Structure probing data (DMS) for a 177-nucleotide construct. The RNA was probed in 150 mM KOAc, 10 mM MgCl2 and 150 mM bicine (pH 8.5) at 24 C.

RNA sequence: GGGAACGACUCGAGUAGAGUCGAAAACGCGGAGAUCUCCCCAGCGAUCGCUAUUUUUCAGCCAGAUGUCCCGGCGUCUCAAUGCAUCCUGAAGGCGCUCCAGCAGACAAAGCGAGUAACCGGCACGACCUACGGAGGUAUUCGUACCUCCGUAGGUAAAAGAAACAACAACAACAAC
Reactivity to DMS in 0.01 (KOAc 150mM, MgCl2 10mM, bicine 150mM(pH8.5), 24C), signal-to-noise 1, nucleotides 027 to 126: c030g000c030g010g000a090g020a080u010c070u000c030c010c010c070a070g010c060g000a040u000c070g020c010u010a060u020u000u000u000u000c050a120g010c030c090a100g020a070u000g000u000c000c000c010g000g010c070g040u000c040u000c120a000a080u000g000c090a100u000c090c020u000g010a170a110g010g000c030g000c040u000c020c000a080g040c030a000g000a060c130a040a120a100g010c050g010a090g020u010a090a080c070c020g000g000c090a060c140g020